[RMDB]
RNA sequence: GGGAACGACUCGAGUAGAGUCGAAAAGCGUUUAGCUUCGGCUAAACGCAAAUAAGCUGACCAGCUAUGAGGUCAUACAUCGUGAUAGCACAAAGAAAGAGAAAACACCUCUGUUCGCAGAGGUGAACCCUAAUACCAGGUUCGCCUGGUAUUAGGGAAAAGAAACAACAACAACAAC
Reactivity to 2A3 in 0.01 (KOAc 150mM, MgCl2 10mM, bicine 150mM(pH8.5), 24C), signal-to-noise 4, nucleotides 027 to 126: g000c000g010u010u000u000a010g000c000u030u040c180g070g000c010u000a000a000a000c000g000c000a000a010a000u010a010a000g060c060u040g020a010c010c010a020g010c010u020a050u080g160a030g010g030u030c040a030u080a150c080a090u090c140g050u030g060a020u040a020g020c050a010c040a070a100a040g140a050a080a000g160a030g050a010a100a020a020c000a010c000c000u000c000u010g030u060u060c210g020c070a000g000a000g000g000u010g000a000a000
Reactivity to DMS in 0.01 (KOAc 150mM, MgCl2 10mM, bicine 150mM(pH8.5), 24C), signal-to-noise 4, nucleotides 027 to 126: g010c000g010u010u000u000a000g000c020u000u010c170g040g020c000u000a000a010a010c010g030c010a010a030a050u010a090a120g010c130u000g000a040c000c000a180g010c040u000a030u000g010a090g000g000u000c010a040u000a080c180a040u000c120g040u000g020a040u000a030g020c010a170c270a090a040a120g000a060a070a090g000a120g000a070a050a090a130c010a000c000c000u010c000u000g010u000u010c180g000c010a010g010a010g010g000u000g000a000a030